[RMDB]
RNA sequence: GGGAACGACUCGAGUAGAGUCGAAAAGCUUAUGGCAAUUGCACAUUUGGUGCUCCAGAUGAUGCCUCUCGGUUACUUCAUACCGUGCUUGCAAAGGCUGAGUUAUGCUGUUCUGCACGCAUGGUUUACAUCAUUAAGGGUUCGCCCUUAAUGAUGUAAAAGAAACAACAACAACAAC
Reactivity to DMS in 0.01 (KOAc 150mM, MgCl2 10mM, bicine 150mM(pH8.5), 24C), signal-to-noise 3, nucleotides 027 to 126: g000c040u010u010a080u010g010g000c060a080a200u010u000g000c010a020c010a080u010u010u010g020g010u000g010c300u000c010c010a030g000a030u000g020a090u000g010c000c070u000c020u000c020g010g010u000u000a040c150u000u000c120a110u010a070c020c000g020u000g010c000u000u000g000c020a040a060a210g000g000c010u000g010a180g030u000u000a090u010g010c000u000g010u020u010c200u000g000c020a020c040g020c010a000u000g010g010u000u000u000
Reactivity to 2A3 in 0.01 (KOAc 150mM, MgCl2 10mM, bicine 150mM(pH8.5), 24C), signal-to-noise 5, nucleotides 027 to 126: g030c030u150u180a080u300g060g000c030a060a100u120u090g010c010a020c010a060u030u030u120g110g010u130g070c070u030c000c000a000g010a050u060g030a060u040g010c020c000u020c020u020c000g120g060u100u090a100c050u090u130c030a030u030a130c010c000g000u010g000c010u000u020g000c000a000a020a070g030g000c020u030g070a070g250u220u110a090u210g000c000u020g110u210u040c040u030g000c010a010c000g010c000a000u010g000g000u000u010u000

Structure probing data (DMS and 2A3) for a 177-nucleotide construct.
It was measured as part of the RMDB library 15KREP.
The RNA was probed in 150 mM KOAc, 10 mM MgCl2 and 150 mM bicine (pH 8.5) at 24 C.
The DMS profile rests on 2,656 reads.